[RMDB]
RNA sequence: GGGAACGACUCGAGUAGAGUCGAAAAGAUAAGCUAGCAGCAAAAAGGAACCGAUUCCCACCAAGUUCGGAAAGAGAUACCGGGCGAGGCGCUGAAGAAAGAAACUCGCUUCAGACACCCCAAGGACAUGACCUUAAAAUGUUCGCAUUUUAAGGAAGAUGAUACGCAACUUCGGUUGCGUAUCAUCAAAAGAAACAACAACAACAAC
Reactivity to 2A3 in 0.01 (KOAc 150mM, MgCl2 10mM, bicine 150mM(pH8.5), 24C), signal-to-noise 2, nucleotides 027 to 156: g020a040u150a060a000g000c010u060a000g020c060a010g000c000a000a060a170a000a080g090g020a100a010c060c020g030a060u030u110c020c000c010a010c020c010a020a040g020u030u020c010g000g060a090a100a040g060a020g020a030u050a110c010c000g010g000g030c030g010a050g010g040c070g000c020u020g010a000a010g020a010a230a040g060a130a040a030c130u090c150g010c000u030u010c000a050g040a090c000a100c030c020c000c010a030a020g020g010a050c030a140u090g070a030c000c000u000u000a000a000a000a000u020g010u080u070c140g020c110a020u020u010u000u000a000a000g000g000a000a000
Description
Conditions: 150 mM KOAc, 10 mM MgCl2 and 150 mM bicine (pH 8.5), 24 C. The record gives the reactivity of an RNA of 207 nucleotides to 2A3.